RNA sequence: GGGAACGACUCGAGUAGAGUCGAAAAGUGCGCGUGGGUGAGCACGAUGGCGCGCACGUCACCCGGUGUGUAGCCCAGUUUGUUCAGCGAGGCCAGCACCUCCGCACGGUCGCCGGGAUAGCCGGCGUCGCAUCAUUCACUUCGGUGAAUGAUGCGAAAAAGAAACAACAACAACAAC
Reactivity to 2A3 in 0.01 (KOAc 150mM, MgCl2 10mM, bicine 150mM(pH8.5), 24C), signal-to-noise 2, nucleotides 027 to 126: g000u000g000c020g000c030g040u080g000g060g080u090g100a120g040c000a000c040g040a030u130g060g040c000g000c000g000c000a020c020g040u030c010a210c000c000c040g000g000u070g000u000g000u020a000g010c000c090c000a000g050u110u140u110g050u090u200c020a010g020c030g040a090g000g010c000c000a010g000c000a050c000c000u050c080c000g060c000a020c040g000g050u100c040g000c020c030g020g000g030a300u200a040g110c000c040g000g000c000g010
Reactivity to DMS in 0.01 (KOAc 150mM, MgCl2 10mM, bicine 150mM(pH8.5), 24C), signal-to-noise 2, nucleotides 027 to 126: g010u010g010c000g010c040g040u000g010g020g050u000g010a090g010c160a020c040g030a080u020g000g000c030g150c020g000c010a000c020g040u010c090a190c010c010c030g010g020u020g000u010g010u030a130g000c000c010c080a110g000u010u000u020g000u000u040c150a120g000c040g000a150g020g000c040c000a160g030c070a080c020c000u020c040c040g020c090a080c080g000g020u000c030g020c000c000g000g010g010a080u030a110g000c000c030g020g020c000g000